[RMDB]
RNA sequence: GGGAACGACUCGAGUAGAGUCGAAAAGUAUGUAUGGAUAACCAUACGUACAAAUAAUUGCCUCAUGGUGGUGGCUGGGGGCACCCUCAUGGUGGUGGGUGUUGAAAAUAAAGAUCCGAAAGGAUCAGGUAACGAUGAUCUUCGGAUCAUCGUUACCAAAAGAAACAACAACAACAAC
Reactivity to 2A3 in 0.01 (KOAc 150mM, MgCl2 10mM, bicine 150mM(pH8.5), 24C), signal-to-noise 1, nucleotides 027 to 126: g000u000a000u020g070u000a000u000g000g020a180u100a300a110c000c000a000u000a000c000g000u000a000c000a000a030a000u250a040a030u050u200g120c000c000u040c000a020u070g000g030u020g050g000u000g100g000c070u040g050g000g000g040g020c010a020c000c070c000u110c050a000u050g000g030u090g030g000u010g010g020g010u000g050u000u010g010a000a000a050a000u140a020a110a010g000a000u000c000c000g000a080a060a000g000g000a000u000c030a000